An RNA of 177 nucleotides, treated with 2A3 and read out base by base. For 2A3 the reverse transcriptase was SuperScript II with manganese. For 2A3, 1,961 sequencing reads were counted. The reactions ran in a buffer of 150 mM KOAc, 10 mM MgCl2 and 150 mM bicine (pH 8.5), at 24 C. The data come from the RNA Mapping Database (RMDB), library M2PK50.
[RMDB]
RNA sequence: GGGAACGACUCGAGUAGAGUCGAAAAGCAGUUGACUUCGGUCAACUGCAAAUAAAGCUCAAGACGUCCACAGGGAGGAACGUCUUGAGCAACCCAAUAAAAAAACAUGUAAGUUCGCUUACAUGAACGUUCAACUUGUGUUCGCACAAGUUGAACGAAAAGAAACAACAACAACAAC
Reactivity to 2A3 in 0.01 (KOAc 150mM, MgCl2 10mM, bicine 150mM(pH8.5), 24C), signal-to-noise 1, nucleotides 027 to 126: g030c010a000g010u000u000g010a010c000u020u040c140g050g000u000c000a000a000c000u000g020c000a000a000a000u000a000a010a000g010c000u000c000a000a030g010a000c000g000u000c010c040a090c140a150g030g200g070a060g040g020a100a040c010g000u000c000u000u010g010a000g030c000a000a010c010c000c000a010a060u210a000a070a010a000a000a000a000c000a000u000g000u020a000a000g020u040u150c250g030c160u030u000a010c000a010u010g040a030a010